[RMDB]
RNA sequence: GGGAACGACUCGAGUAGAGUCGAAAAACGGCGCAGACGAUGAGCAGUUGCUGCGCGUUGGCAACAACAAUGCGCUCGUAAGGAUCGGUGUCAUCUGCAGUUCGCCGUAACACGCUGCUGCGCUCUGGUUAGGUGUAGUGUUCGCACUACACCUAACAAAAGAAACAACAACAACAAC
Reactivity to DMS in 0.01 (KOAc 150mM, MgCl2 10mM, bicine 150mM(pH8.5), 24C), signal-to-noise 6, nucleotides 027 to 126: a080c100g010g010c010g030c020a050g000a130c090g010a060u000g010a130g030c040a150g010u000u010g010c030u000g010c010g020c090g010u010u000g010g000c070a100a050c200a090a080c030a060a060u000g000c020g030c020u010c090g010u000a100a100g010g010a100u000c030g010g010u000g000u000c040a040u000c050u010g010c070a140g000u010u000c200g000c010c030g010u010a090a100c120a100c140g010c050u010g000c020u000g000c030g000c050u000c050u010g000
Reactivity to 2A3 in 0.01 (KOAc 150mM, MgCl2 10mM, bicine 150mM(pH8.5), 24C), signal-to-noise 5, nucleotides 027 to 126: a000c020g020g020c000g000c000a010g020a120c050g070a130u130g030a020g040c030a020g040u070u080g030c040u020g000c060g000c000g020u020u040g010g000c060a120a070c010a010a020c000a010a180u060g000c040g000c020u090c100g030u060a080a060g100g050a080u110c060g030g020u060g070u060c070a110u030c060u170g020c030a040g020u070u120c040g010c010c000g010u010a040a010c060a010c030g020c020u070g020c010u020g000c030g000c010u060c060u090g070